[RMDB]
Chemical mapping of a 207-nucleotide RNA with 2A3 and DMS. 2A3 is a SHAPE reagent: it acylates the 2'-hydroxyl of flexible nucleotides of all four kinds.
RNA sequence: GGGAACGACUCGAGUAGAGUCGAAAAGACAAGAUCUCCUUCUCUCCAACGUUGUUGCCAACUCAUGAUUCUCCUAACCUGUGCUUGGAGAGACGUGGACCGAGAGUCAGAGGACCUCUGACUUCCAAAAACCCGUUUCGGUUCGCCGAAACGGGAACUUAAUUGAAGGGUUCGCCCUUCAAUUAAGAAAAGAAACAACAACAACAAC
Reactivity to 2A3 in 0.01 (KOAc 150mM, MgCl2 10mM, bicine 150mM(pH8.5), 24C), signal-to-noise 1, nucleotides 027 to 156: g030a020c100a040a080g020a250u020c030u000c030c000u090u050c000u000c020u020c020c000a110a090c060g000u040u020g030u060u140g120c000c020a050a020c070u080c100a150u060g060a190u200u050c050u040c040c030u110a120a120c000c050u130g100u050g130c060u050u000g000g000a000g000a000g000a000c030g020u050g050g000a020c060c040g050a050g000a000g150u000c000a040g020a020g060g130a070c020c050u000c020u020g000a010c010u050u060c010c020a100a090a050a070a080c010c010c000g000u000u000u000c010g040g000u020u040c200g010c040c000g000a000a000a000c000g010g000g010a000a010
Reactivity to DMS in 0.01 (KOAc 150mM, MgCl2 10mM, bicine 150mM(pH8.5), 24C), signal-to-noise 1, nucleotides 027 to 156: g010a130c140a120a060g000a300u010c040u000c040c010u000u000c010u000c000u000c020c000a030a130c020g040u000u000g020u010u020g000c000c020a070a130c050u000c040a080u010g000a160u000u000c010u000c020c020u000a010a050c050c090u000g000u020g030c040u000u000g030g000a080g000a030g000a040c030g070u000g000g000a150c040c050g000a070g010a000g030u000c000a030g000a090g000g000a140c200c020u000c010u000g000a010c010u000u000c030c030a080a100a140a080a110c000c010c010g020u000u000u000c010g010g020u000u000c300g030c050c040g000a000a040a020c000g010g010g000a000a000
Notes:
The reactions ran in a buffer of 150 mM KOAc, 10 mM MgCl2 and 150 mM bicine (pH 8.5), at 24 C. For DMS, 2,261 sequencing reads were counted. Reactivities are rounded to 0.1 and cut off at 0 and 3.